[RMDB]
RNA sequence: GGGAACGACUCGAGUAGAGUCGAAAACAGCUUCACGUUCAGCUUCAACGGGUGCAUCAAGAACAGGGGCCUCGACUUCCGUUGCAAAACUUCGGGUUCAGAGAUAACAAGAGCCUCAGUGACAGGAUGUAAAAGGAACGUUCGCGUUCCUUUUACAAAAAGAAACAACAACAACAAC
Reactivity to DMS in 0.01 (KOAc 150mM, MgCl2 10mM, bicine 150mM(pH8.5), 24C), signal-to-noise 5, nucleotides 027 to 126: c100a080g010c030u000u010c050a090c100g000u020u000c040a050g000c030u010u020c060a070a110c110g000g000g000u000g000c050a040u010c060a060a040g000a090a060c080a060g000g000g010g020c010c010u000c050g010a060c060u010u010c020c010g010u000u010g010c120a060a060a150a110c050u000u020c070g000g020g010u000u010c060a100g010a100g000a130u020a070a130c120a060a110g010a100g020c020c000u000c070a060g010u010g000a120c090a090g000g000a200
Reactivity to 2A3 in 0.01 (KOAc 150mM, MgCl2 10mM, bicine 150mM(pH8.5), 24C), signal-to-noise 6, nucleotides 027 to 126: c030a010g050c020u110u090c060a020c080g070u070u060c030a020g000c010u080u060c040a080a060c060g020g010g060u060g010c030a070u040c040a090a120g040a100a040c030a050g030g000g030g000c000c020u020c030g020a040c010u100u020c020c000g020u010u040g030c060a010a030a090a130c010u060u050c050g010g040g000u020u000c040a030g020a010g030a120u120a210a090c080a130a050g010a010g070c000c000u020c020a020g010u020g050a040c060a070g070g030a050